[RMDB]
Source: RMDB library TTRDES, as collected in RNAgym.
The record gives the reactivity of an RNA of 177 nucleotides to DMS and 2A3.
For 2A3, 4,680 sequencing reads were counted.
The DMS profile rests on 3,626 reads.
RNA sequence: GGGAACGACUCGAGUAGAGUCGAAAAGAUAUGGAGACCCGAGCUUUUGACGCGAUAGUGUCGGAAACGACAUUUAUCGCGAUAAGCUCAGGGUCUCCUAAGUCAAACAAGGUGUUCGCACCUUGAAUCAGUACCUACUGUUCGCAGUAGGUACUGAAAAAGAAACAACAACAACAAC
Reactivity to DMS in 0.01 (KOAc 150mM, MgCl2 10mM, bicine 150mM(pH8.5), 24C), signal-to-noise 3, nucleotides 027 to 126: g010a050u000a300u020g000g000a020g010a000c000c010c000g000a010g000c000u000u000u000u010g010a200c130g020c010g000a010u000a000g020u010g000u000c000g000g000a050a080a170c020g010a020c000a000u000u010u010a000u000c000g010c010g000a030u000a010a010g010c000u000c000a060g030g000g010u000c000u010c010c000u000a020a040g010u000c020a130a110a300c010a000a010g010g030u010g020u000u010c300g030c040a010c000c000u000u000g010a120a180
Reactivity to 2A3 in 0.01 (KOAc 150mM, MgCl2 10mM, bicine 150mM(pH8.5), 24C), signal-to-noise 2, nucleotides 027 to 126: g020a030u060a010u130g000g000a000g010a000c000c000c000g000a000g000c060u200u230u280u300g230a130c070g020c020g000a010u010a010g010u000g020u010c010g000g000a100a040a020c020g050a020c040a060u300u300u040a000u010c010g000c000g000a000u010a000a000g010c000u000c010a010g020g000g020u000c000u000c000c000u000a000a000g010u000c020a010a080a090c020a000a010g020g000u000g060u110u150c250g080c150a000c010c000u000u010g010a020a110
Values cover nucleotides 27 to 126. The RNA was probed in 150 mM KOAc, 10 mM MgCl2 and 150 mM bicine (pH 8.5) at 24 C.